RNA sequence: GGGAACGACUCGAGUAGAGUCGAAAACGCUAGCGACCAACUGAGCGAUCCGAUGCGUGAUGGUGCGCGUCUUGCCGGUUCCGGCCCCGGCGAGCACGCAGACGGGUCCGCGGGGCGCGAGCACGGCUAGUCGCGAUUAGUUCGCUAAUCGCGACUAAAAAGAAACAACAACAACAAC
Reactivity to 2A3 in 0.01 (KOAc 150mM, MgCl2 10mM, bicine 150mM(pH8.5), 24C), signal-to-noise 5, nucleotides 027 to 126: c080g000c030u020a020g000c000g110a300c020c010a160a180c080u160g040a070g040c020g020a020u000c000c000g030a040u030g010c010g030u020g020a100u200g050g140u160g030c090g000c010g070u020c000u000u020g000c000c000g010g010u110u090c020c030g030g030c000c000c010c010g030g000c000g000a030g000c010a010c010g000c000a000g070a130c020g020g000g000u010c050c060g000c010g020g010g000g000c010g000c020g010a010g000c020a030c090g060g000c020
Reactivity to DMS in 0.01 (KOAc 150mM, MgCl2 10mM, bicine 150mM(pH8.5), 24C), signal-to-noise 3, nucleotides 027 to 126: c090g010c010u000a070g010c010g020a080c010c010a140a080c120u030g010a190g030c030g000a030u000c000c020g010a200u010g000c030g030u020g000a160u010g020g010u010g030c040g020c030g010u010c000u000u010g000c000c010g000g020u030u000c010c020g000g020c010c050c010c010g000g020c010g000a040g000c020a010c000g020c020a050g000a120c040g000g020g000u000c020c060g050c060g020g020g000g000c000g040c030g000a040g000c000a160c070g000g000c080
This 177-nucleotide RNA was probed chemically with 2A3 and DMS. The RNA was probed in 150 mM KOAc, 10 mM MgCl2 and 150 mM bicine (pH 8.5) at 24 C. For DMS, 6,952 sequencing reads were counted. Source: RMDB library OK1LIB, as collected in RNAgym.